[RMDB]
RNA sequence: GGGAACGACUCGAGUAGAGUCGAAAAAACAUUUCGCUACAAGAUUGAUACAGCCAUAGCUGUGGCAAUGUAAUACAAUAAUUAUUGCCACAGCUAUGACUGUACCAUUUUCCAGAAGCGGACACGGCGCACAGUAUACGUUCGCGUAUACUGUGCGAAAAGAAACAACAACAACAAC
Reactivity to 2A3 in 0.01 (KOAc 150mM, MgCl2 10mM, bicine 150mM(pH8.5), 24C), signal-to-noise 1, nucleotides 027 to 126: a010a010c020a000u050u050u030c000g000c000u030a030c000a110a000g020a070u010u030g000a000u000a020c000a000g010c010c000a000u000a010g080c010u000g020u020g010g030c000a010a030u000g040u110a070a040u150a200c150a150a060u180a190a060u140u040a000u000u000g000c000c000a000c000a000g000c000u000a000u000g000a000c010u000g000u010a000c000c000a000u010u000u030u050c060c020a000g010a120a010g000c000g020g020a020c060a040c190g120g070
Reactivity to DMS in 0.01 (KOAc 150mM, MgCl2 10mM, bicine 150mM(pH8.5), 24C), signal-to-noise 1, nucleotides 027 to 126: a040a050c080a150u000u000u000c010g000c020u000a100c210a300a040g010a030u010u000g000a060u000a000c010a030g010c020c010a000u000a000g010c010u020g030u000g050g010c000a000a040u000g010u000a090a070u010a160c200a100a110u000a070a080u010u010a080u000u000g000c010c000a010c010a000g010c000u000a000u000g070a000c000u010g010u000a000c020c000a010u000u000u010u000c010c110a110g010a050a070g040c000g020g000a010c290a040c160g010g000

Structure probing data (2A3 and DMS) for a 177-nucleotide construct. For 2A3 the reverse transcriptase was SuperScript II with manganese. The RNA was probed in 150 mM KOAc, 10 mM MgCl2 and 150 mM bicine (pH 8.5) at 24 C.